RNA sequence: GGGAACGACUCGAGUAGAGUCGAAAAGAUAUGGACCUGUACAGGGUGAUGACCUACAUCGGAAACGAUGUAGCAAGCCCGUACGAGGUCCUAAGUCAAACCGAGAAGGCCUUCGGGCCUUCUCGGACAAGAAAGUUCAGUUCGCUGAACUUUCUUGAAAAGAAACAACAACAACAAC
Reactivity to DMS in 0.01 (KOAc 150mM, MgCl2 10mM, bicine 150mM(pH8.5), 24C), signal-to-noise 5, nucleotides 027 to 126: g010a040u000a300u000g000g000a010c000c010u000g000u000a000c010a220g050g010g030u010g010a100u020g020a180c300c000u000a010c000a010u000c000g020g000a110a080a130c000g010a010u000g010u000a000g000c020a060a160g020c000c000c040g010u000a010c000g000a030g040g000u000c000c000u010a010a080g010u000c030a120a140a220c000c000g010a020g010a020a030g010g000c020c000u010u010c260g040g030g030c000c010u000u000c010u010c000g000g000a040
Reactivity to 2A3 in 0.01 (KOAc 150mM, MgCl2 10mM, bicine 150mM(pH8.5), 24C), signal-to-noise 4, nucleotides 027 to 126: g020a000u050a050u160g000g010a010c000c030u000g000u030a030c300a300g040g000g040u090g100a300u120g010a030c020c000u000a000c000a000u010c000g000g030a030a100a040c010g000a010u000g010u000a010g020c000a030a110g020c000c000c000g000u010a000c050g100a020g000g010u020c000c000u010a080a000g030u020c070a110a030a110c010c020g000a010g010a000a000g050g000c090c140u200u240c300g150g010g000c000c000u000u000c000u000c000g000g000a000